An RNA of 177 nucleotides, treated with DMS and 2A3 and read out base by base.
In probing experiments dimethyl sulfate is read out at A N1 and C N3, which are open when not base-paired.
The 2A3 profile rests on 1,479 reads.
As a SHAPE reagent, 2A3 marks flexible, mostly unpaired nucleotides at the ribose 2'-OH.
It was measured as part of the RMDB library OK2TST.
RNA sequence: GGGAACGACUCGAGUAGAGUCGAAAAUUUACGAAGGCACAUCUACAGGCAUCGGCUGCGCUCCGUCUUACCGUGUUAAGCGCAUGGACAUAUCCCAAGCAGACGAGCAAGCUGUAGUUAACGCUGCAGCACCAAAUGCAUUCGUGCAUUUGGUGCUAAAAGAAACAACAACAACAAC
Reactivity to DMS in 0.01 (KOAc 150mM, MgCl2 10mM, bicine 150mM(pH8.5), 24C), signal-to-noise 2, nucleotides 027 to 126: u000u010u000a050c160g000a120a110g000g020c020a080c150a090u010c010u000a050c060a110g000g000c030a140u000c020g000g010c030u010g030c010g000c080u010c100c030g010u000c040u000u010a210c110c020g000u000g000u020u060a060a090g000c120g000c040a070u010g000g000a140c140a080u000a080u000c010c000c040a080a150g000c050a000g010a020c050g000a050g010c090a170a110g010c000u000g010u000a030g020u000u000a060a060c300g010c030u000g000c060
Reactivity to 2A3 in 0.01 (KOAc 150mM, MgCl2 10mM, bicine 150mM(pH8.5), 24C), signal-to-noise 1, nucleotides 027 to 126: u100u070u080a090c060g050a070a080g040g000c000a020c010a050u000c060u100a010c000a070g040g000c010a150u040c010g020g000c040u030g030c060g020c040u030c020c000g090u010c050u050u030a110c070c010g040u000g010u110u080a000a080g060c060g000c050a010u050g020g000a010c030a050u140a060u070c040c000c000a030a010g030c020a020g010a010c040g000a000g030c100a110a030g060c010u000g000u000a010g000u030u080a060a040c090g000c030u020g000c020